[RMDB]
RNA sequence: GGGAACGACUCGAGUAGAGUCGAAAAGGUCGUCUUUUCGAAGACGACCACUGUCGUUCCCAAAACUUUUCGAAACAUGUCGAAAGACAUGCUGUAACAGAAUUGGUGUGUGUUUCGACACACACAAGUUUCUCUCUAGGUUCGCCUAGAGAGAAACAAAAGAAACAACAACAACAAC
Reactivity to 2A3 in 0.01 (KOAc 150mM, MgCl2 10mM, bicine 150mM(pH8.5), 24C), signal-to-noise 3, nucleotides 027 to 126: g010g010u000c000g010u010c010u010u030u020u110c210g100a010a010g000a010c000g000a000c000c000a000c010u030g000u000c000g010u000u000c000c000c000a010a010a000a000c020u040u030u040u050c050g070a070a020a050c010a000u000g000u020c000g050a090a020a030g000a000c000a010u010g000c000u080g050u120a130a060c060a090g100a130a150u160u160g140g020u010g010u000g000u000g020u000u060u120c230g050a000c010a000c010a000c000a010c000a000a010
Reactivity to DMS in 0.01 (KOAc 150mM, MgCl2 10mM, bicine 150mM(pH8.5), 24C), signal-to-noise 3, nucleotides 027 to 126: g000g010u000c000g010u000c000u000u000u000u010c140g020a010a030g010a010c010g010a000c000c010a010c070u010g010u000c000g000u000u000c010c000c000a060a030a110a210c080u000u000u000u000c030g010a180a080a070c000a020u010g010u000c000g000a110a060a170g000a000c010a000u000g020c020u000g000u010a080a120c200a090g000a020a010u000u000g010g020u000g000u000g010u000g000u000u000u030c160g000a050c000a000c000a000c010a010c000a040a040